[RMDB]
RNA sequence: GGGAACGACUCGAGUAGAGUCGAAAAAAAGACGCGGUUGCCGAUCGGUAUGGAUGCCACCGUGACGGCUCAAUCACACAAGUGCCAACGAUAACGAGGCGCUCGCUAUUGGUGCGUAACUGACGGCUAGAUACAGCCAGGUUCGCCUGGCUGUAAACCGUAGCGUUAGCUUCGGCUAACGCUACGGAAAAGAAACAACAACAACAAC
Reactivity to 2A3 in 0.01 (KOAc 150mM, MgCl2 10mM, bicine 150mM(pH8.5), 24C), signal-to-noise 1, nucleotides 027 to 156: a000a000a000g100a000c020g000c090g070g020u010u030g000c010c000g140a140u000c000g000g000u070a070u100g150g000a080u150g000c000c000a060c030c040g010u050g000a090c070g070g000c000u000c000a020a030u160c000a050c000a020c040a080a110g070u060g000c000c000a130a080c040g030a070u070a190a060c070g000a070g060g010c030g010c010u020c010g040c000u040a090u150u080g050g070u000g010c030g040u060a040a000c020u100g020a100c000g000g000c010u020a000g020a050u000a050c000a020g000c000c000a000g010g000u030u000c030g020c100c000u020g030g000c000u000g000u000a010a010a010

Structure probing data (2A3) for a 207-nucleotide construct. 2A3 adducts were read by reverse transcription with SuperScript II with manganese. It was measured as part of the RMDB library M2RFPK. For 2A3, 484 sequencing reads were counted. The reactions ran in a buffer of 150 mM KOAc, 10 mM MgCl2 and 150 mM bicine (pH 8.5), at 24 C.